[RMDB]
An RNA of 177 nucleotides, treated with DMS and 2A3 and read out base by base.
It was measured as part of the RMDB library TTRDES.
The DMS profile rests on 1,413 reads.
The RNA was probed in 150 mM KOAc, 10 mM MgCl2 and 150 mM bicine (pH 8.5) at 24 C.
RNA sequence: GGGAACGACUCGAGUAGAGUCGAAAAGAUAUGGAGAGCGAUGGGUGCCAGCUAUUCGGUCGGAAACGACCGGUAGCGGUAAUUCCCAUUCGCUCUCCUAAGUCAAACACUUAGCUUCGGCUAAGUGCUCUACCUAGCACUUCGGUGCUAGGUAGAGAAAAGAAACAACAACAACAAC
Reactivity to DMS in 0.01 (KOAc 150mM, MgCl2 10mM, bicine 150mM(pH8.5), 24C), signal-to-noise 2, nucleotides 027 to 126: g010a040u000a300u010g000g000a000g010a010g000c020g030a020u000g000g010g010u000g000c030c000a180g050c010u000a000u010u020c000g000g000u000c000g010g010a120a170a250c020g010a000c000c020g000g000u000a000g000c020g010g010u000a020a190u000u000c000c000c000a000u010u020c000g010c010u000c000u010c000c000u000a000a070g000u000c030a200a150a300c010a050c000u000u000a020g000c010u000u010c210g050g000c000u000a000a000g000u000g000
Reactivity to 2A3 in 0.01 (KOAc 150mM, MgCl2 10mM, bicine 150mM(pH8.5), 24C), signal-to-noise 2, nucleotides 027 to 126: g020a000u110a050u170g020g000a030g010a020g000c020g010a010u020g030g000g050u000g050c080c080a140g020c130u000a000u200u300c030g000g000u010c010g000g040a070a100a070c020g000a010c000c020g000g000u000a000g030c000g000g000u010a010a060u130u100c010c010c000a020u020u000c010g020c000u000c000u000c000c000u010a000a000g010u010c000a110a000a000c030a010c020u000u010a000g020c000u050u050c300g100g020c000u010a000a010g000u000g020